Structure probing data (DMS and 2A3) for a 177-nucleotide construct.
For 2A3 the reverse transcriptase was SuperScript II with manganese.
The RNA was probed in 150 mM KOAc, 10 mM MgCl2 and 150 mM bicine (pH 8.5) at 24 C.
It was measured as part of the RMDB library TTRDES.
DMS adducts were read by reverse transcription with MarathonRT.
The DMS profile rests on 2,533 reads.
RNA sequence: GGGAACGACUCGAGUAGAGUCGAAAAGAUAUGGAGUGAAGAGACAUGAAGAAUGUCGGAAACGACAUACUUCAACAGCUCUCACUCCUAAGUCAAACCGUAAAAUAUCUUCGGAUAUUUUACGGAACCAGAGUGUAUUCUUCGGAAUACACUCUGGAAAAGAAACAACAACAACAAC
Reactivity to DMS in 0.01 (KOAc 150mM, MgCl2 10mM, bicine 150mM(pH8.5), 24C), signal-to-noise 3, nucleotides 027 to 126: g010a010u000a130u010g010g010a020g000u000g000a050a090g000a010g000a060c130a150u000g010a030a000g000a230a020u000g000u010c010g000g000a040a050a090c000g030a020c000a010u000a090c000u010u000c000a110a160c280a220g020c000u000c000u000c000a000c000u000c000c010u010a010a040g010u000c010a130a130a220c010c000g000u000a010a000a010a000u000a000u000c000u010u000c240g030g000a010u000a000u000u000u000u000a010c000g000g010a040a040
Reactivity to 2A3 in 0.01 (KOAc 150mM, MgCl2 10mM, bicine 150mM(pH8.5), 24C), signal-to-noise 3, nucleotides 027 to 126: g000a000u030a020u070g010g000a000g000u010g040a300a100g020a060g020a060c120a280u300g000a010a000g030a020a010u010g010u000c010g000g000a010a010a000c010g000a000c000a000u040a170c000u000u000c080a300a270c090a180g000c000u010c000u000c000a000c000u000c000c000u000a010a000g010u000c030a070a070a160c000c010g010u000a010a000a000a000u010a000u010c030u050u110c290g060g010a000u000a000u010u000u000u010a000c000g000g010a000a010